Structure probing data (2A3 and DMS) for a 177-nucleotide construct. Reactivities are given for positions 27 through 126.
RNA sequence: GGGAACGACUCGAGUAGAGUCGAAAAAUCUUCUGCUCUGGUGGCUGCUGCUCCGGCAGCAGUACUGCUUUGCGCCGCCAGUGAUGCGCUGGUAUCAGAUGCGGCGGCGUGAGUGGAUGCCUCCGAUCUAAAUGAUCUACUUCGGUAGAUCAUUUAGAAAAGAAACAACAACAACAAC
Reactivity to 2A3 in 0.01 (KOAc 150mM, MgCl2 10mM, bicine 150mM(pH8.5), 24C), signal-to-noise 9, nucleotides 027 to 126: a000u030c020u040u000c010u010g010c000u000c040u070g040g000u020g040g000c010u000g000c000u000g000c000u020c060c190g120g000c000a000g000c000a000g000u010a020c000u010g040c010u100u130u240g010c000g000c000c000g000c000c010a100g030u030g060a030u070g010c080g030c190u240g220g020u080a040u100c010a020g100a290u170g160c070g030g000c000g000g000c010g010u020g000a000g000u010g010g000a010u040g030c000c020u000c010c010g030a040u000
Reactivity to DMS in 0.01 (KOAc 150mM, MgCl2 10mM, bicine 150mM(pH8.5), 24C), signal-to-noise 4, nucleotides 027 to 126: a080u030c030u000u000c000u000g000c000u000c010u010g010g010u000g000g010c000u020g000c010u000g000c000u000c240c150g000g010c000a010g000c010a010g010u010a030c010u010g010c070u010u020u030g030c010g000c000c000g020c010c010a160g010u000g010a040u000g000c020g010c200u000g000g020u010a030u000c020a080g010a170u010g020c160g020g000c000g020g010c000g020u000g010a010g020u000g000g000a050u000g010c100c030u000c040c020g010a300u000